[RMDB]
RNA sequence: GGGAACGACUCGAGUAGAGUCGAAAAGUGUGCCGGUCAACCGGCCGAGCUCGAUCUGGUUUCGACGGAUACCGCUACGGCCCGCGCUGAAUUGGAUGCGGUCGAGGCGGCUCGAAUCGCCGCGGAGUAGCAGUGAGCCAUUCGUGGCUCACUGCUAAAAAGAAACAACAACAACAAC
Reactivity to 2A3 in 0.01 (KOAc 150mM, MgCl2 10mM, bicine 150mM(pH8.5), 24C), signal-to-noise 1, nucleotides 027 to 126: g110u100g020u020g000c060c050g020g080u110c230a300a300c180c140g010g080c000c000g000a070g000c020u020c070g100a180u010c060u150g140g000u060u090u010c010g010a010c010g000g070a060u120a080c000c000g010c030u020a040c020g020g040c020c110c080g060c000g000c060u180g080a300a210u300u220g120g080a080u060g030c010g040g000u000c000g020a090g000g050c000g030g020c040u000c000g010a040a000u000c050g000c040c000g080c100g060g070a100g080
Reactivity to DMS in 0.01 (KOAc 150mM, MgCl2 10mM, bicine 150mM(pH8.5), 24C), signal-to-noise 1, nucleotides 027 to 126: g000u000g010u010g030c000c000g000g040u040c230a150a120c130c240g010g020c020c030g000a070g010c080u000c050g000a070u000c100u000g020g040u000u010u000c000g020a030c020g030g000a110u000a130c050c040g030c020u000a240c040g020g000c050c030c030g060c020g030c010u020g030a050a090u000u000g000g040a070u000g000c020g030g000u000c010g010a300g000g020c020g000g010c000u000c040g010a050a080u030c020g010c040c000g020c130g000g000a140g000

An RNA of 177 nucleotides, treated with 2A3 and DMS and read out base by base.
For DMS, 826 sequencing reads were counted.
DMS adducts were read by reverse transcription with MarathonRT.